[RMDB]
RNA sequence: GGGAACGACUCGAGUAGAGUCGAAAAUUGACUCUUACAAAGCGAUAGUUGUAGGAGUAUUAGUCUUACUAUCGCACUAUUGGACAUAAGACUAGGAGUUGCUAUUGCGUCCAAUAGAUGGCAACUGGCACUGCAGGCUAUUCGUAGUCUGUAGUGCAAAAGAAACAACAACAACAAC
Reactivity to DMS in 0.01 (KOAc 150mM, MgCl2 10mM, bicine 150mM(pH8.5), 24C), signal-to-noise 9, nucleotides 027 to 126: u010u010g010a030c000u000c000u000u000a000c000a000a020a230g010c000g000a010u000a010g020u000u000g000u000a010g000g000a020g010u000a050u010u010a080g010u010c110u000u010a130c010u000a010u000c010g020c000a300c020u000a010u000u000g000g000a020c010a130u000a100a090g010a120c130u000a080g000g010a090g010u000u000g010c020u000a130u010u010g010c140g000u000c000c000a010a010u000a010g000a090u000g010g000c030a020a030c040u000g010
Reactivity to 2A3 in 0.01 (KOAc 150mM, MgCl2 10mM, bicine 150mM(pH8.5), 24C), signal-to-noise 9, nucleotides 027 to 126: u060u080g020a000c000u000c000u000u000a000c000a000a000a010g000c000g000a000u000a000g010u010u000g000u000a000g000g010a000g010u000a010u020u100a000g020u000c040u050u110a070c010u010a000u000c000g000c000a000c000u010a000u010u010g000g000a000c010a030u170a160a080g070a080c040u040a050g120g050a070g080u030u020g010c010u030a040u110u190g050c030g000u000c000c000a000a000u000a000g050a010u010g050g000c010a010a010c020u020g060

Structure probing data (DMS and 2A3) for a 177-nucleotide construct. Conditions: 150 mM KOAc, 10 mM MgCl2 and 150 mM bicine (pH 8.5), 24 C.